[RMDB]
RNA sequence: GGGAACGACUCGAGUAGAGUCGAAAAGCGCAGCAUUACGAUGCUGCGCAAACACUAUGUGAUCUUAUUAAAAUAAGGUUAAAUUUCGAGGUUAAAAAUAGUUUUAAUAUUGCUAUAGUGUACCCUCGUGCAACGCGCAUGCUACGGCAUGCGCGAAGUAUUUAUCCCGAUUCGUCGGGAUAAAUACAAAAGAAACAACAACAACAAC
Reactivity to 2A3 in 0.01 (KOAc 150mM, MgCl2 10mM, bicine 150mM(pH8.5), 24C), signal-to-noise 1, nucleotides 027 to 156: g010c000g020c000a000g000c010a010u040u040a080c170g040a010u000g000c010u000g020c000g010c000a000a000a020c010a010c010u130a080u220g140u080g060a110u000c000u040u010a030u020u190a160a100a080a100u020a020a020g000g000u020u040a120a000a160u220u180u100c060g050a060g040g040u040u020a140a130a040a080a060u070a060g000u040u000u060u150a140a030u230a140u180u110g010c040u010a010u020a100g040u060g020u050a040c000c030c000u020c030g010u010g080c050a090a090c050g020c000g000c000a000u000g000c010u010a030c230g090g000c010a010u000g030c000g020c000g000a000a000
This 207-nucleotide RNA was probed chemically with 2A3. For 2A3 the reverse transcriptase was SuperScript II with manganese. For 2A3, 515 sequencing reads were counted.